An RNA of 207 nucleotides, treated with 2A3 and DMS and read out base by base. The DMS profile rests on 2,295 reads. For 2A3 the reverse transcriptase was SuperScript II with manganese. Conditions: 150 mM KOAc, 10 mM MgCl2 and 150 mM bicine (pH 8.5), 24 C.
RNA sequence: GGGAACGACUCGAGUAGAGUCGAAAAUUUAACUAGCUCGUUUGUGAACACAUCUACGCUAACCGGAUCUACGGUGGCUUUUCGGAGGAGUGUUAUUACCGAAACGCCUUUUACUUCUGUCUCCUCUGAUAGCACGGUUUCCGAGGUGAAAGAAUCCUCAAUGAUCAGCAUUCGUGCUGAUCAUUGAAAAAGAAACAACAACAACAAC
Reactivity to 2A3 in 0.01 (KOAc 150mM, MgCl2 10mM, bicine 150mM(pH8.5), 24C), signal-to-noise 2, nucleotides 027 to 156: u060u100u070a040a030c010u020a030g050c010u050c080g100u000u020u180g130u020g140a190a010c080a010c000a170u010c040u120a060c030g000c010u010a030a100c030c000g000g030a070u040c060u150a110c050g180g180u030g050g050c000u210u100u010u050c010g000g000a010g000g020a040g030u060g130u230u140a120u060u140a020c010c030g050a060a040a030c080g130c010c030u050u210u040u140a130c050u050u060c010u050g060u030c000u000c000c000u010c000u000g000a000u020a010g000c000a020c050g010g030u040u040u000c000c020g000a020g050g000u030g050a080a050a030g030a020a060u070c000c000
Reactivity to DMS in 0.01 (KOAc 150mM, MgCl2 10mM, bicine 150mM(pH8.5), 24C), signal-to-noise 1, nucleotides 027 to 156: u000u000u110a070a170c070u000a070g010c020u000c050g010u010u000u010g030u000g010a120a080c080a150c070a040u000c030u000a070c060g040c020u000a090a120c040c040g000g010a100u000c060u010a090c050g010g020u000g030g040c000u010u010u000u010c020g020g030a050g000g020a090g030u000g020u000u000a040u000u010a090c030c000g010a010a060a080c080g020c090c040u000u000u000u000a080c060u000u000c020u010g020u000c010u020c000c000u000c020u000g000a080u000a040g000c000a100c020g000g030u000u000u000c000c000g010a090g040g000u000g010a100a080a120g000a110a150u000c000c040